The record gives the reactivity of an RNA of 177 nucleotides to DMS and 2A3. High 2A3 reactivity points to a flexible backbone, as in loops and unpaired stretches. For 2A3 the reverse transcriptase was SuperScript II with manganese. The DMS profile rests on 3,522 reads. The 2A3 profile rests on 8,192 reads. The data come from the RNA Mapping Database (RMDB), library M2PK50. The reactions ran in a buffer of 150 mM KOAc, 10 mM MgCl2 and 150 mM bicine (pH 8.5), at 24 C. Reactivities are given for positions 27 through 126.
[RMDB]
RNA sequence: GGGAACGACUCGAGUAGAGUCGAAAAUCUACAUAGUUCGCUAUGUAGAAAAACGCGCACGCGCGCGCACGCGCUCACUCUCGCACACGCACGCGCACGCAUAAACGUUGCGGUUCGCCGCAACGAACUAUACACAUCCCUUCGGGGAUGUGUAUAGAAAAGAAACAACAACAACAAC
Reactivity to DMS in 0.01 (KOAc 150mM, MgCl2 10mM, bicine 150mM(pH8.5), 24C), signal-to-noise 4, nucleotides 027 to 126: u000c000u000a000c000a010u000a010g020u000u000c180g020c020u000a000u010g030u010a000g020a010a040a030a100a090c100g000c030g030c070a080c090g000c030g020c030g010c010g010c030a180c170g010c030g000c220u000c130a090c130u020c140u000c030g010c010a130c130a090c050g000c000a020c010g010c000g030c030a060c000g010c030a110u010a050a050a210c010g020u010u000g020c000g000g000u010u010c160g010c000c000g010c000a000a010c010g020a020a110
Reactivity to 2A3 in 0.01 (KOAc 150mM, MgCl2 10mM, bicine 150mM(pH8.5), 24C), signal-to-noise 4, nucleotides 027 to 126: u000c000u000a010c000a000u010a010g020u020u050c140g050c090u000a000u010g010u000a010g010a020a000a000a000a010c060g000c000g000c010a020c090g020c000g010c000g020c010g000c020a010c060g030c000g020c010u070c080a150c030u160c010u040c040g000c020a030c010a010c120g000c010a010c020g000c000g000c010a000c000g000c010a010u150a040a120a020c010g000u010u000g010c000g000g070u030u080c280g020c080c000g000c000a000a000c000g000a010a000